[RMDB]
RNA sequence: GGGAACGACUCGAGUAGAGUCGAAAAGGACACUUAGCCAUUCUGGAACUCAGUUUGCACAUGGGUAGAAUGUAUACUAGUGGUCAUUCUUAUUAGCGGUCCCGUGGGGUCAGAUGAGAUAAUGCAAGCAUAGGAAAGAGUUCGCUCUUUCCUAUGCAAAAGAAACAACAACAACAAC
Reactivity to 2A3 in 0.01 (KOAc 150mM, MgCl2 10mM, bicine 150mM(pH8.5), 24C), signal-to-noise 4, nucleotides 027 to 126: g060g020a010c010a000c050u090u070a020g010c000c010a030u060u010c030u060g090g140a060a040c000u000c020a050g050u020u130u200g150c080a100c080a210u030g050g000g000u010a010g010a030a000u030g010u050a080u040a080c030u040a030g040u030g130g010u000c010a020u060u000c010u040u080a180u060u100a040g060c040g050g000u010c030c010c000g020u100g040g020g010g010u040c030a040g000a100u070g020a030g030a070u160a130a030u150g050c090a060a070
Reactivity to DMS in 0.01 (KOAc 150mM, MgCl2 10mM, bicine 150mM(pH8.5), 24C), signal-to-noise 4, nucleotides 027 to 126: g000g020a080c020a040c030u010u010a040g030c130c010a020u010u000c020u000g030g010a140a060c020u000c020a050g010u000u010u020g020c140a050c120a080u000g010g000g020u000a030g000a020a010u000g010u000a100u000a130c080u000a030g010u000g000g010u000c020a080u000u000c030u000u000a090u000u000a120g020c080g000g010u000c010c010c030g020u010g020g000g000g010u000c040a060g000a060u010g000a050g000a070u000a070a060u020g010c100a080a110

The data come from the RNA Mapping Database (RMDB), library OK2TST. An RNA of 177 nucleotides, treated with 2A3 and DMS and read out base by base. For DMS, 5,839 sequencing reads were counted. In probing experiments dimethyl sulfate is read out at A N1 and C N3, which are open when not base-paired.